[RMDB]
RNA sequence: GGGAACGACUCGAGUAGAGUCGAAAAGACCGUCAGUUAGACGGAAGAAGUGCAUAAAUCCACACCGGAAGACCAGAUAGUGCACAAAUGUGGAUAAGCGUACGGAUCUACGUGCGCUAAACGUGAGGAUCGACUACCGAUUCGUCGGUAGUCGAUCAAAAGAAACAACAACAACAAC
Reactivity to DMS in 0.01 (KOAc 150mM, MgCl2 10mM, bicine 150mM(pH8.5), 24C), signal-to-noise 2, nucleotides 027 to 126: g000a150c010c020g030u120c060a140g030u010u040a120g010a040c030g000g010a120a020g010a080a200g060u020g000c000a000u020a050a070a070u020c000c030a150c210a120c260c060g000g030a070a020g000a300c010c000a090g030a170u080a230g000u040g010c000a000c000a080a050a030u000g110u020g000g000a090u020a060a000g020c000g000u000a000c080g010g040a120u040c180u040a060c000g040u000g000c000g000c000u000a040a060a070c250g040u010g030a100g000
Reactivity to 2A3 in 0.01 (KOAc 150mM, MgCl2 10mM, bicine 150mM(pH8.5), 24C), signal-to-noise 2, nucleotides 027 to 126: g110a000c000c000g000u000c010a090g000u120u220a050g000a040c040g070g050a020a010g060a040a020g000u020g000c030a100u050a260a210a050u020c060c000a020c020a020c040c040g090g000a030a010g020a110c000c010a040g040a150u060a070g070u010g050c020a000c030a040a070a000u300g000u090g130g000a030u000a120a000g000c000g000u000a010c000g030g010a060u100c050u140a030c020g000u000g010c000g000c000u020a030a010a000c040g040u060g070a100g000